[RMDB]
RNA sequence: GGGAACGACUCGAGUAGAGUCGAAAAUAGAUGUUAUGAUGACGAGUCGGUCGGCUCCGCGCUAGGUUUGGUCGCCUAGGGGAUGGAGAUAUGGAAAGGGUCUCGUGUGCUGUCAGUCGGUCGAAAGGGAUAGUCCUAAGUUCGCUUAGGACUAUCCAAAAGAAACAACAACAACAAC
Reactivity to 2A3 in 0.01 (KOAc 150mM, MgCl2 10mM, bicine 150mM(pH8.5), 24C), signal-to-noise 1, nucleotides 027 to 126: u100a000g080a050u070g010u160u110a140u160g150a060u080g020a020c030g020a010g020u030c010g020g000u020c010g030g090c050u030c020c000g060c000g000c010u010a020g020g030u050u010u150g070g000u070c020g000c000c000u000a020g000g030g060g010a030u070g080g000a020g020a020u090a100u130g130g050a060a070a100g070g000g030u000c010u020c020g000u010g000u010g010c020u000g030u050c020a020g060u030c040g010g020u020c050g050a090a050a000g090
Reactivity to DMS in 0.01 (KOAc 150mM, MgCl2 10mM, bicine 150mM(pH8.5), 24C), signal-to-noise 1, nucleotides 027 to 126: u020a100g020a080u000g000u030u000a070u020g020a120u010g000a100c090g000a060g020u000c060g040g010u000c020g000g020c000u000c000c030g030c020g020c000u010a020g010g020u000u010u000g030g020u010c270g000c020c010u000a040g000g010g030g030a090u000g000g000a020g010a030u000a090u000g010g000a080a090a060g000g000g000u020c010u010c020g030u000g020u000g030c050u010g010u000c020a050g000u000c100g000g000u000c040g020a040a050a110g010

An RNA of 177 nucleotides, treated with 2A3 and DMS and read out base by base.
Reactivities are given for positions 27 through 126.
2A3 is a SHAPE reagent: it acylates the 2'-hydroxyl of flexible nucleotides of all four kinds.
For DMS the reverse transcriptase was MarathonRT.
The reactions ran in a buffer of 150 mM KOAc, 10 mM MgCl2 and 150 mM bicine (pH 8.5), at 24 C.